Chemical mapping of a 177-nucleotide RNA with 2A3. 2A3 adducts were read by reverse transcription with SuperScript II with manganese. The 2A3 profile rests on 432 reads. Reactivities are given for positions 27 through 126.
RNA sequence: GGGAACGACUCGAGUAGAGUCGAAAAGUAACUCUUUUAGAGUUACUUCUCAUCCUCACCAUUCAUUUUUUUAAGAUCUAAUGGUUAAAAUUAGUUACUUAUUACAACCAUUAGAUUUUAAGAAAAUAAUUUCUCCUUUCUUCGGAAAGGAGAAAUUAAAAGAAACAACAACAACAAC
Reactivity to 2A3 in 0.01 (KOAc 150mM, MgCl2 10mM, bicine 150mM(pH8.5), 24C), signal-to-noise 1, nucleotides 027 to 126: g000u010a010a000c010u050c030u040u250u140u300a110g000a010g010u000u000a000c000u050u030c000u000c010a030u020c010c010u060c020a150c060c030a050u120u200c020a050u010u100u000u050u010u000u000a000a020g010a000u000c000u010a010a000u000g000g000u010u060a130a220a050a080u080u070a010g070u090u180a180c020u040u150a060u040u040a060c050a010a030c010c010a000u000u000a000g000a000u000u000u000u000a000a020g000a000a020a000a000u020
It was measured as part of the RMDB library RFM100.